[RMDB]
RNA sequence: GGGAACGACUCGAGUAGAGUCGAAAAUAAUAUGCAUAUCGAGUUCCCAUGUAUUUUCGUAGCCCUCCGGCUGUAACAUUACAGCUUAGUAAGAAUGCUACCUAACGAUAGCUAGCCGCAGGAUUAAACUAAAGACCAGGUUCGCCUGGUCUUUAGUAAAAGAAACAACAACAACAAC
Reactivity to DMS in 0.01 (KOAc 150mM, MgCl2 10mM, bicine 150mM(pH8.5), 24C), signal-to-noise 2, nucleotides 027 to 126: u010a080a050u000a020u000g010c040a040u000a050u010c060g020a170g010u000u000c000c010c000a110u000g020u000a050u000u000u010u000c050g010u000a080g010c040c080c000u000c110c060g010g020c010u020g010u000a010a100c280a100u000u000a020c010a060g000c090u000u000a080g010u010a040a020g000a120a050u010g000c020u000a010c010c080u030a060a130c110g000a090u000a000g000c020u000a080g000c010c040g030c110a060g000g000a080u000u000a070a090